[RMDB]
RNA sequence: GGGAACGACUCGAGUAGAGUCGAAAAGUGGUGCGUCAAGUUUUGAAUCAGCAAUUCUUGCUGGUAUGUCUCACGCAAUGAUUUUCAGUGGUUCUGACUGUUUAUCUGCGAACCGUUAUAUUAAACGGCCAUCUUAGCGAUUCGUCGCUAAGAUGGCAAAAGAAACAACAACAACAAC
Reactivity to DMS in 0.01 (KOAc 150mM, MgCl2 10mM, bicine 150mM(pH8.5), 24C), signal-to-noise 2, nucleotides 027 to 126: g010u000g000g030u000g030c030g000u020c070a080a080g010u000u000u000u010g000a140a030u000c040a020g010c040a050a130u010u000c150u000u010g000c010u020g010g020u000a040u010g010u010c030u000c080a180c050g020c040a060a070u000g010a040u000u010u000u000c030a020g010u000g020g020u000u010c120u020g020a080c050u000g000u000u010u000a020u010c020u000g020c060g020a060a160c080c040g000u000u000a100u010a140u000u000a050a050a050c130g010
Reactivity to 2A3 in 0.01 (KOAc 150mM, MgCl2 10mM, bicine 150mM(pH8.5), 24C), signal-to-noise 2, nucleotides 027 to 126: g030u020g110g010u090g020c050g030u040c070a130a060g010u040u060u140u210g050a020a030u000c000a010g010c030a020a040u230u060c150u170u080g000c000u000g000g000u040a060u060g120u000c000u000c040a020c000g000c000a010a060u080g030a030u020u010u010u010c000a000g000u040g050g140u170u010c040u090g060a080c010u010g020u020u040u010a040u000c050u040g020c040g070a040a020c040c020g000u020u040a140u010a020u120u210a130a040a020c020g060